[RMDB]
RNA sequence: GGGAACGACUCGAGUAGAGUCGAAAAGAUAUGGAUCCGAGAGCGAGACCGUGUCGGAAACGACAUUGGUCGAUGAGCUCCGGAUCCUAAGUCAAAACCAGUCAAGUUCUUCGGAACUUGACUGGAACGUGUUAACCUCCUUCGGGAGGUUAACACGAAAAGAAACAACAACAACAAC
Reactivity to DMS in 0.01 (KOAc 150mM, MgCl2 10mM, bicine 150mM(pH8.5), 24C), signal-to-noise 1, nucleotides 027 to 126: g020a020u010a050u010g000g000a010u000c010c000g010a140g020a010g030c000g000a030g020a000c000c010g040u000g000u010c000g080g000a010a020a030c010g030a000c000a050u000u000g150g000u000c010g000a060u020g010a300g000c000u010c000c000g000g000a000u000c000c000u000a000a120g000u000c000a060a130a170a210c000c000a000g010u000c000a000a010g010u000u000c000u000u010c290g000g000a020a000c000u000u000g020a000c000u010g030g000a000a010
Reactivity to 2A3 in 0.01 (KOAc 150mM, MgCl2 10mM, bicine 150mM(pH8.5), 24C), signal-to-noise 1, nucleotides 027 to 126: g000a020u000a020u070g010g000a000u050c000c020g210a240g040a020g300c090g090a050g010a120c000c010g000u020g000u010c000g050g000a010a000a000c010g000a010c020a050u300u300g000g030u010c000g000a020u040g040a020g000c010u010c000c000g000g000a000u010c000c000u000a000a000g000u000c010a000a000a000a260c010c010a010g000u000c010a000a000g000u040u000c000u080u250c300g230g000a000a010c020u000u010g000a020c000u000g020g010a020a010